[RMDB]
RNA sequence: GGGAACGACUCGAGUAGAGUCGAAAAUACGCACACAAGUUGAUUUAGCUAAAGAAGUCUUUUCUAUACCAGUUAAUAUUUGCUCACAACCUUUAGCCAUAACUCUCAUAGGAGAACUUGCAAGCUAAAUGCCCUACUGAUUCGUCAGUAGGGCAUUAAAAGAAACAACAACAACAAC
Reactivity to DMS in 0.01 (KOAc 150mM, MgCl2 10mM, bicine 150mM(pH8.5), 24C), signal-to-noise 2, nucleotides 027 to 126: u020a050c050g000c090a060c100a150c060a040a070g030u040u010g000a100u010u000u000a030g000c000u000a040a170a260g000a050a110g020u010c040u020u000u010u000c000u000a060u000a080c300c300a040g000u020u030a050a130u000a120u000u020u000g000c040u000c110a090c170a070a050c140c070u000u020u040a040g040c070c070a070u000a040a110c040u000c030u000c210a080u000a070g020g010a000g010a020a040c040u000u010g020c100a070a050g000c050u000a020
Reactivity to 2A3 in 0.01 (KOAc 150mM, MgCl2 10mM, bicine 150mM(pH8.5), 24C), signal-to-noise 3, nucleotides 027 to 126: u070a030c030g010c020a000c010a000c060a120a060g040u040u010g110a180u030u050u080a030g030c010u070a070a020a020g040a080a020g060u080c050u010u060u030u030c040u060a100u040a090c010c020a000g010u070u020a140a050u110a260u120u120u140g040c020u010c030a050c000a040a160c020c030u060u050u090a020g000c020c010a050u020a080a020c000u010c010u030c050a060u090a070g070g000a020g020a000a000c000u000u050g050c070a090a040g010c000u040a030

Background
Source: RMDB library OK1LIB, as collected in RNAgym. The record gives the reactivity of an RNA of 177 nucleotides to DMS and 2A3. The RNA was probed in 150 mM KOAc, 10 mM MgCl2 and 150 mM bicine (pH 8.5) at 24 C. The 2A3 profile rests on 1,882 reads. DMS adducts were read by reverse transcription with MarathonRT.